[RMDB]
RNA sequence: GGGAACGACUCGAGUAGAGUCGAAAAUGUGGUUCCUUCGGGAACCACACACUACCGAGAAUGAUCCUCGGUAUAUAAAUCAAACCCUUGGUAACAAGGGAACACUCCCUAGCUUCGGCUAGGGAAAUCACUUAAGAGGAUUCGUCCUCUUAAGUGAAAAAGAAACAACAACAACAAC
Reactivity to 2A3 in 0.01 (KOAc 150mM, MgCl2 10mM, bicine 150mM(pH8.5), 24C), signal-to-noise 3, nucleotides 027 to 126: u060g000u000g010g000u000u010c010c010u010u030c180g010g000g000a000a000c000c000a000c000a000c000a000c000u030a000c000c010g000a000g030a100a290u210g040a080u110c030c000u000c000g000g000u010a010u010a000u010a060a030a010u080c080a040a030a300c000c000c010u000u010g040g000u060a080a040c000a010a000g000g000g010a000a010c010a020c020u020c000c000c000u000a010g010c000u030u040c230g100g000c000u000a000g010g000g000a020a000a000
Reactivity to DMS in 0.01 (KOAc 150mM, MgCl2 10mM, bicine 150mM(pH8.5), 24C), signal-to-noise 5, nucleotides 027 to 126: u000g020u000g010g000u000u000c000c000u000u010c210g020g010g000a000a010c000c000a000c000a010c130a090c080u000a000c000c000g000a010g010a150a190u010g020a160u010c070c000u000c010g000g010u000a000u000a030u010a040a050a060u010c150a080a100a140c010c000c000u000u000g010g000u020a120a130c000a010a010g000g010g000a050a040c170a090c160u010c000c000c000u000a000g000c010u000u010c180g030g000c000u000a000g010g000g000a000a010a040